Notes:
This 207-nucleotide RNA was probed chemically with DMS and 2A3. It was measured as part of the RMDB library M2RFOK. The DMS profile rests on 5,592 reads.

RNA sequence: GGGAACGACUCGAGUAGAGUCGAAAAACAUGCUUGCCAACCCAACCCCACGAUCCUCCAUCGGCAUGAUCAUGAUGUGUUCUCAAAUAUCAGGCCAGUAAAUCACCAUGCUCGUGCUGGUAAAGGCAACUUAUGCCCAAGUUCGCUUGGGCAUAAACGUUGUUGAUAUGUUCGCAUAUCAACAACGAAAAGAAACAACAACAACAAC
Reactivity to DMS in 0.01 (KOAc 150mM, MgCl2 10mM, bicine 150mM(pH8.5), 24C), signal-to-noise 2, nucleotides 027 to 156: a100c060a070u000g000c010u010u000g030c030c010a090a150c080c030c010a050a090c030c000c010c000a120c110g000a090u000c010c010u000c030c030a060u010c040g010g000c000a020u010g000a000u000c000a070u000g010a050u010g000u000g000u010u000c060u000c060a140a100a140u010a100u010c080a100g040g000c000c040a110g020u010a030a050a090u000c020a080c020c010a040u000g010c080u000c010g020u010g010c000u020g000g030u000a010a040a050g020g000c050a060a080c050u000u000a000u000g030c000c000c000a010a040g050u000u000c300g010c020u000u010g000g000g000c020a000u000a000a020a140
Reactivity to 2A3 in 0.01 (KOAc 150mM, MgCl2 10mM, bicine 150mM(pH8.5), 24C), signal-to-noise 5, nucleotides 027 to 156: a010c050a040u080g020c010u070u060g020c010c010a030a050c040c030c010a040a040c010c010c010c030a040c050g070a110u070c010c040u040c040c020a040u020c010g010g000c010a020u010g020a010u010c020a010u030g050a060u090g030u010g050u120u030c100u020c050a060a080a030u240a090u130c090a070g030g080c050c000a020g020u080a010a110a050u060c010a010c010c010a000u030g000c010u020c020g020u010g010c000u000g000g010u040a080a090a010g020g010c030a020a020c020u010u000a000u010g000c000c000c000a010a010g000u030u070c100g020c150u000u010g020g000g000c000a000u000a000a000a000